Source: RMDB library M2PK90, as collected in RNAgym. An RNA of 177 nucleotides, treated with DMS and read out base by base. Values cover nucleotides 27 to 126.
RNA sequence: GGGAACGACUCGAGUAGAGUCGAAAACAACAGGGUGGUUGGUGGUGGACGAGCCACUCGCCAACCGGGUCAGGUCCGGAAGGAAGCAGCCCUAACGAGCCAGGCACGGGUCGCCGUGCCAGUACAAUAUCAGGAUCUCUUUCGAGAGAUCCUGAUAAAAAGAAACAACAACAACAAC
Reactivity to DMS in 0.01 (KOAc 150mM, MgCl2 10mM, bicine 150mM(pH8.5), 24C), signal-to-noise 2, nucleotides 027 to 126: c020a070a140c240a130g020g010g020u000g020g000u000u000g040g010u010g000g010u000g000g030a210c300g050a280g030c000c000a000c000u010c080g080c020c020a010a020c020c000g000g000g070u030c030a300g000g000u010c010c040g040g040a140a100g000g030a040a010g000c070a250g000c000c000c020u040a080a090c250g000a080g000c000c010a220g030g000c000a010c000g030g000g000u000c300g020c010c000g000u000g000c010c000a020g020u000a080c230a120a160
The RNA was probed in 150 mM KOAc, 10 mM MgCl2 and 150 mM bicine (pH 8.5) at 24 C. For DMS, 784 sequencing reads were counted.